[RMDB]
Record summary
The record gives the reactivity of an RNA of 177 nucleotides to 2A3 and DMS. Conditions: 150 mM KOAc, 10 mM MgCl2 and 150 mM bicine (pH 8.5), 24 C. For DMS the reverse transcriptase was MarathonRT. Source: RMDB library OK2TRN, as collected in RNAgym. For 2A3 the reverse transcriptase was SuperScript II with manganese.

RNA sequence: GGGAACGACUCGAGUAGAGUCGAAAAUCGGAACGGAUCGAUGCGCCGGACUGUGCGAAUGGUUUCAUUCUCGACGGCUAUCCGCGCACUGUGCCGCAGGCUCAGGCCUUGAGCCAGAUGCUGUCGAUAUGGGACCAUAGUUCGCUAUGGUCCCAUAAAAAGAAACAACAACAACAAC
Reactivity to 2A3 in 0.01 (KOAc 150mM, MgCl2 10mM, bicine 150mM(pH8.5), 24C), signal-to-noise 2, nucleotides 027 to 126: u110c070g040g040a070a000c030g050g040a050u080c030g020a020u030g030c000g040c070c020g020g030a040c030u040g010u060g120c040g030a050a040u100g050g000u000u000u060c020a010u120u040c050u000c140g050a030c010g000g000c010u020a030u040c060c020g000c030g020c030a040c060u150g160u210g060c030c000g060c060a020g020g000c030u020c040a090g130g190c050c000u090u060g000a000g000c000c000a020g000a020u050g000c010u000g010u020c000g000a010
Reactivity to DMS in 0.01 (KOAc 150mM, MgCl2 10mM, bicine 150mM(pH8.5), 24C), signal-to-noise 3, nucleotides 027 to 126: u010c050g020g000a100a120c120g020g010a040u010c070g020a070u000g010c130g000c050c060g000g010a110c070u010g020u020g030c050g010a070a040u010g000g000u010u010u010c030a080u010u010c160u000c010g000a030c030g010g000c010u000a050u000c050c130g020c110g010c040a080c080u000g000u010g030c040c010g000c220a120g000g010c010u000c070a110g010g010c060c110u000u000g000a110g000c020c000a110g000a070u010g010c010u000g000u000c020g000a040